Source: RMDB library OK2TRN, as collected in RNAgym. Chemical mapping of a 177-nucleotide RNA with DMS and 2A3. The 2A3 profile rests on 6,641 reads. For DMS, 8,686 sequencing reads were counted. The reactions ran in a buffer of 150 mM KOAc, 10 mM MgCl2 and 150 mM bicine (pH 8.5), at 24 C. DMS adducts were read by reverse transcription with MarathonRT.
RNA sequence: GGGAACGACUCGAGUAGAGUCGAAAAUAGGCUCAUGACGUAUCUCCGUGGCAUUAGUUAUAAGGUCACGGUAGGUGCCCUUGUUGCCAAUGAGGGGUGGAACGCCUCUGAGGACGCGCUGACCGCCCCCUGAGAGUGUAUUCGUACACUCUCAGGGAAAAGAAACAACAACAACAAC
Reactivity to DMS in 0.01 (KOAc 150mM, MgCl2 10mM, bicine 150mM(pH8.5), 24C), signal-to-noise 5, nucleotides 027 to 126: u010a120g010g010c010u000c010a000u010g000a140c170g020u010a020u010c010u000c010c000g020u000g020g000c000a050u000u000a040g010u000u020a100u000a010a010g010g020u000c000a010c000g010g010u010a000g020g010u000g010c010c110c020u000u000g010u010u010g010c000c000a110a110u010g000a090g000g000g000g020u000g010g010a100a120c110g000c010c070u000c020u000g000a150g010g010a020c220g020c040g000c070u010g010a300c020c010g010c010c020
Reactivity to 2A3 in 0.01 (KOAc 150mM, MgCl2 10mM, bicine 150mM(pH8.5), 24C), signal-to-noise 4, nucleotides 027 to 126: u120a000g010g010c010u000c020a010u040g030a040c050g020u030a020u010c000u000c000c000g000u020g000g010c030a060u050u050a050g190u200u300a220u060a300a030g040g000u010c000a000c000g000g040u050a010g000g000u010g010c000c000c000u030u060g110u080u100g000c000c030a010a040u180g080a080g000g040g000g000u030g010g020a050a030c030g000c030c000u020c020u030g070a230g120g060a030c050g040c000g010c060u040g040a080c010c000g020c000c010